Notes
This 177-nucleotide RNA was probed chemically with DMS and 2A3. The DMS profile rests on 2,033 reads. Reactivities are rounded to 0.1 and cut off at 0 and 3. 2A3 adducts were read by reverse transcription with SuperScript II with manganese. It was measured as part of the RMDB library TTRDEL. For 2A3, 3,006 sequencing reads were counted.
RNA sequence: GGGAACGACUCGAGUAGAGUCGAAAAGAUAUGGAUCCCACCAGGCUAAGACAGGGAGUCGGAAACGACUCCUCGAGCCUGUGUGGGAGUCCUAAGUCAAAGUCCUAUCGCUUCGGCGAUAGGACAACAGUACGUCAGUGUUCGCACUGACGUACUGAAAAGAAACAACAACAACAAC
Reactivity to DMS in 0.01 (KOAc 150mM, MgCl2 10mM, bicine 150mM(pH8.5), 24C), signal-to-noise 3, nucleotides 027 to 126: g000a030u010a300u000g000g010a300u000c000c000c000a030c000c020a000g010g010c010u010a210a090g010a070c300a070g010g010g020a000g010u000c010g000g010a090a050a130c000g000a010c000u010c000c000u000c010g020a010g020c000c010u010g010u020g030u010g000g000g000a010g020u010c000c000u020a030a210g000u010c040a090a060a140g020u000c000c000u000a000u000c000g000c020u000u020c230g040g000c000g000a010u000a020g000g000a000c000a010a050
Reactivity to 2A3 in 0.01 (KOAc 150mM, MgCl2 10mM, bicine 150mM(pH8.5), 24C), signal-to-noise 1, nucleotides 027 to 126: g000a000u050a050u100g030g010a020u040c000c040c000a010c010c010a010g020g000c010u180a270a070g090a160c070a150g130g000g000a020g000u000c000g040g000a030a060a040c000g000a000c000u000c000c000u000c000g000a000g000c000c020u030g110u210g000u020g040g000g040a010g020u030c010c000u020a100a030g040u020c080a140a100a000g000u000c000c020u030a000u000c010g000c050u040u100c300g160g000c010g000a020u010a000g010g000a000c020a000a000